[RMDB]
RNA sequence: GGGAACGACUCGAGUAGAGUCGAAAAGAUAUGGAAAGAACUACUUCUCGUAGUUCGAGGAUCUCGGAAACGAGGGAGAAUCAAGAGAAGCUUUCCUAAGUCAAAGAACUGGGUUCGCCCAGUUCAAGAGUUAGUGCAAGUUCGCUUGCACUAACUCAAAAGAAACAACAACAACAAC
Reactivity to 2A3 in 0.01 (KOAc 150mM, MgCl2 10mM, bicine 150mM(pH8.5), 24C), signal-to-noise 1, nucleotides 027 to 126: g020a030u110a040u220g000g020a050a020a000g010a040a050c080u200a020c010u300u010c050u010c010g070u270a030g000u010u000c020g010a060g010g030a020u000c040u040c030g030g040a100a090a060c010g000a030g020g060g030a050g000a040a010u140c170a240a000g000a000g000a010a010g000c010u020u020u000c000c000u010a170a050g010u010c020a120a000a250g020a000a010c000u000g000g000g100u070u080c250g120c110c020c000a010g000u000u000c000a000a010
Reactivity to DMS in 0.01 (KOAc 150mM, MgCl2 10mM, bicine 150mM(pH8.5), 24C), signal-to-noise 2, nucleotides 027 to 126: g000a030u020a300u030g000g000a040a000a030g000a040a020c000u000a300c000u000u000c000u000c000g020u000a300g000u000u000c020g000a030g010g020a010u000c030u010c000g020g000a120a030a090c000g040a000g000g000g000a040g020a030a000u000c010a300a300g000a010g020a010a040g020c010u000u000u000c000c000u000a080a100g000u000c010a100a200a130g040a000a010c000u000g040g020g050u000u000c230g000c020c000c000a000g000u000u000c000a050a150